[RMDB]
RNA sequence: GGGAACGACUCGAGUAGAGUCGAAAAUUAACUCUAUACUUUCCCUGCAAUACGCUAUUCGCCUUAGAUGUAUCUGGGUGGCUGCUCCACUAAAGCCCGGGAAUAUGCAACCAGUUACAUUUGAGGCCACGUGGAUACGUUUCGACGUAUCCACGUGAAAAGAAACAACAACAACAAC
Reactivity to DMS in 0.01 (KOAc 150mM, MgCl2 10mM, bicine 150mM(pH8.5), 24C), signal-to-noise 1, nucleotides 027 to 126: u010u060a130a080c040u020c060u020a050u000a030c070u000u000u000c050c000c000u000g000c090a130a090u000a030c100g040c070u000a120u010u000c110g000c000c000u020u000a000g000a020u020g000u000a030u000c000u000g000g000g000u020g000g010c020u000g000c090u000c000c030a100c090u030a150a150a140g000c060c080c030g000g000g010a000a030u000a050u050g000c000a030a070c000c030a020g010u010u040a010c000a010u010u000u000g010a060g000g010c010
Reactivity to 2A3 in 0.01 (KOAc 150mM, MgCl2 10mM, bicine 150mM(pH8.5), 24C), signal-to-noise 4, nucleotides 027 to 126: u080u060a100a040c030u040c080u100a070u070a190c060u040u020u020c000c000c000u010g010c020a090a130u120a210c090g010c050u140a150u110u190c050g000c010c000u010u000a010g000a010u010g000u000a000u010c010u000g000g010g100u090g070g030c020u010g010c010u000c000c010a140c110u170a240a090a050g050c010c070c050g040g000g050a040a070u260a050u230g000c000a000a040c000c000a010g000u000u000a000c000a000u000u000u020g000a000g000g010c000